[RMDB]
RNA sequence: GGGAACGACUCGAGUAGAGUCGAAAACAAACAAAAUGCAAAAAAAGGAGCAAACAACAACCUAAUAAAGGCAAACCAGUAGCAGAAUGCAAAGACCUGUCUGGAAGGACCACUGGACAUAUACAAAGAGGAGGCACGCUCAAAUAAAAAACUAUGACAUAAUAAUGGUGUUCGCACCAUUAUUAUGAAAAGAAACAACAACAACAAC
Reactivity to DMS in 0.01 (KOAc 150mM, MgCl2 10mM, bicine 150mM(pH8.5), 24C), signal-to-noise 1, nucleotides 027 to 156: c050a160a200a220c030a030a100a090a170u000g050c050a000a010a020a060a100a080a060g010g020a100g000c030a060a090a090c060a100a090c030a070a080c000c010u000a030a110u010a120a050a070g000g020c030a050a070a110c030c000a030g000u010a120g030c030a020g000a080a090u020g010c040a110a060a070g010a000c080c030u000g000u000c050u030g060g000a110a070g030g000a050c000c000a060c030u010g030g000a000c040a040u000a080u000a240c090a040a080a130g000a090g010g000a110g000g000c000a030c040g000c010u010c010a020a110a160u070a020a080a050a070a050a020c090u000a090u000g000a160
Reactivity to 2A3 in 0.01 (KOAc 150mM, MgCl2 10mM, bicine 150mM(pH8.5), 24C), signal-to-noise 4, nucleotides 027 to 156: c010a000a080a040c050a030a120a010a030u130g040c060a070a060a020a030a000a080a180g040g050a050g000c070a090a040a100c040a040a020c020a010a050c040c010u060a060a050u120a150a160a010g040g000c030a060a010a050c020c030a040g000u040a020g040c040a020g030a190a060u110g040c050a060a150a020g030a030c020c020u010g050u030c020u010g050g020a040a030g050g020a010c010c020a020c070u060g010g000a000c020a020u230a000u030a060c060a050a110a010g030a030g020g010a000g030g000c020a000c030g030c020u020c000a050a120a010u160a040a070a030a010a010a010c120u220a120u210g020a020

The record gives the reactivity of an RNA of 207 nucleotides to DMS and 2A3.
Conditions: 150 mM KOAc, 10 mM MgCl2 and 150 mM bicine (pH 8.5), 24 C.
Source: RMDB library OK3TST, as collected in RNAgym.
2A3 adducts were read by reverse transcription with SuperScript II with manganese.
Reactivities are given for positions 27 through 156.